The data come from the RNA Mapping Database (RMDB), library TTRDEL. This 177-nucleotide RNA was probed chemically with DMS and 2A3. The reactions ran in a buffer of 150 mM KOAc, 10 mM MgCl2 and 150 mM bicine (pH 8.5), at 24 C. Values are in units of 0.01, from 0 to 300, in steps of 10. DMS adducts were read by reverse transcription with MarathonRT.
RNA sequence: GGGAACGACUCGAGUAGAGUCGAAAAGAUAUGGAAGGACAAUGGUGGGAUACGAACUACAAGCCUAUCGGAAACGAUAGCGCUUGCGGAGUCCUUCCUAAGUCAAACAUGGUGUUCGCACCAUGAAGACGUGUCACAUCUUCGGAUGUGACACGUCAAAAGAAACAACAACAACAAC
Reactivity to DMS in 0.01 (KOAc 150mM, MgCl2 10mM, bicine 150mM(pH8.5), 24C), signal-to-noise 2, nucleotides 027 to 126: g010a120u010a170u020g000g010a100a030g000g000a040c000a070a300u020g010g010u000g000g010g000a230u010a160c190g050a040a210c060u000a300c020a000a000g000c000c000u010a000u000c000g030g000a020a110a070c030g000a000u000a000g000c280g010c030u010u000g000c000g000g010a300g000u000c000c020u000u010c000c020u010a000a110g030u000c010a080a070a180c060a010u000g020g020u010g050u010u020c210g010c000a010c030c000a040u000g000a120a000
Reactivity to 2A3 in 0.01 (KOAc 150mM, MgCl2 10mM, bicine 150mM(pH8.5), 24C), signal-to-noise 2, nucleotides 027 to 126: g030a000u020a010u080g010g000a020a020g020g000a000c040a030a050u060g000g090u120g060g070g040a110u190a300c140g150a260a070c050u060a030c040a020a000g020c000c000u010a000u000c000g030g000a030a020a000c000g000a000u020a000g080c130g010c040u010u000g040c010g000g020a020g000u000c000c000u000u020c000c000u000a040a000g000u000c000a020a060a090c010a040u040g010g000u030g060u090u130c260g060c100a010c000c000a000u010g020a010a040